[RMDB]
RNA sequence: GGGAACGACUCGAGUAGAGUCGAAAAUGAGGAAAGCAACUAGAAGGCUGAUUCAGUUGAUAGUAAGUGGAAGAGACGAACAAUCAAUCGCUGAGGCAAUCAUUGUAGCAAUGGUGUUCUCACAGGAGGAUUGCAUGAUAAAGGCAGUCCGAGGCGAUCCAUAUCCCACUUUCGAGUGGGAUAUGGAAAAAGAAACAACAACAACAAC
Reactivity to 2A3 in 0.01 (KOAc 150mM, MgCl2 10mM, bicine 150mM(pH8.5), 24C), signal-to-noise 4, nucleotides 027 to 156: u090g000a020g010g010a060a010a010g040c050a040a040c040u100a070g020a090a010g060g010c060u070g010a110u080u100c060a020g010u050u040g080a030u040a030g040u100a130a020g000u070g070g020a040a020g010a010g020a040c040g050a050a040c030a060a050u100c030a010a050u040c020g000c080u010g000a020g040g000c030a010a090u050c030a050u040u050g100u170a060g080c040a010a010u020g030g000u010g010u130u100c020u020c000a040c060a030g050g050a030g000g010a020u010u000g000c030a030u070g050a070u200a110a070a000g040g000c000a000g000u000c000c010g000a010g000g000c000g010a020
Reactivity to DMS in 0.01 (KOAc 150mM, MgCl2 10mM, bicine 150mM(pH8.5), 24C), signal-to-noise 3, nucleotides 027 to 156: u030g000a100g000g000a000a120a090g020c020a060a100c060u010a110g030a090a080g030g000c040u010g000a120u000u000c030a080g020u000u010g000a110u000a080g000u000a070a100g070u010g020g010a080a060g000a120g000a080c050g000a110a070c070a100a100u000c050a080a100u010c070g040c040u010g000a140g020g020c070a070a070u000c040a010u010u010g000u000a140g040c080a040a040u000g020g010u000g000u010u010c000u010c020a060c080a120g000g040a250g040g010a020u000u000g000c010a120u000g020a180u000a090a040a180g000g010c010a020g020u010c010c010g000a160g040g020c020g030a140
Structure probing data (2A3 and DMS) for a 207-nucleotide construct. For 2A3, 3,251 sequencing reads were counted. 2A3 adducts were read by reverse transcription with SuperScript II with manganese. The reactions ran in a buffer of 150 mM KOAc, 10 mM MgCl2 and 150 mM bicine (pH 8.5), at 24 C. Source: RMDB library OK3TST, as collected in RNAgym.